[RMDB]
Conditions: 150 mM KOAc, 10 mM MgCl2 and 150 mM bicine (pH 8.5), 24 C. Structure probing data (2A3 and DMS) for a 177-nucleotide construct. The DMS profile rests on 16,693 reads. DMS adducts were read by reverse transcription with MarathonRT.

RNA sequence: GGGAACGACUCGAGUAGAGUCGAAAAGAUAUGGAUCCGAAAGGGAGCGUGACAUCGGAAACGAUGUCAACGCGAGGAUCUUUCUGGAUCCUAAGUCAAAACGACUGCCACUUCGGUGGCAGUCGAACAUAAGUAACACGUUCGCGUGUUACUUAUGAAAAGAAACAACAACAACAAC
Reactivity to 2A3 in 0.01 (KOAc 150mM, MgCl2 10mM, bicine 150mM(pH8.5), 24C), signal-to-noise 2, nucleotides 027 to 126: g000a000u010a000u040g000g000a000u000c010c010g010a000a000a000g000g020g010a040g010c000g010u010g010a000c000a010u000c000g020g000a000a000a000c010g000a000u000g000u010c010a010a040c010g000c000g020a070g020g010a010u010c000u010u010u010c060u110g010g000a000u000c010c000u000a000a000g010u000c000a000a030a070a140c020g000a000c010u000g010c010c000a020c000u070u120c300g190g000u000g000g000c000a000g000u000c000g010a010a000
Reactivity to DMS in 0.01 (KOAc 150mM, MgCl2 10mM, bicine 150mM(pH8.5), 24C), signal-to-noise 5, nucleotides 027 to 126: g000a010u000a010u020g000g000a010u000c000c000g010a000a010a020g010g010g000a010g030c000g030u000g000a000c000a000u000c000g010g010a010a000a030c000g010a010u000g000u000c010a010a000c000g030c000g000a100g010g010a030u000c010u000u000u000c010u020g020g010a010u000c000c000u000a000a070g000u000c010a110a070a150a280c030g010a010c000u000g010c000c000a010c000u000u020c260g030g010u000g000g000c000a000g010u000c000g010a030a130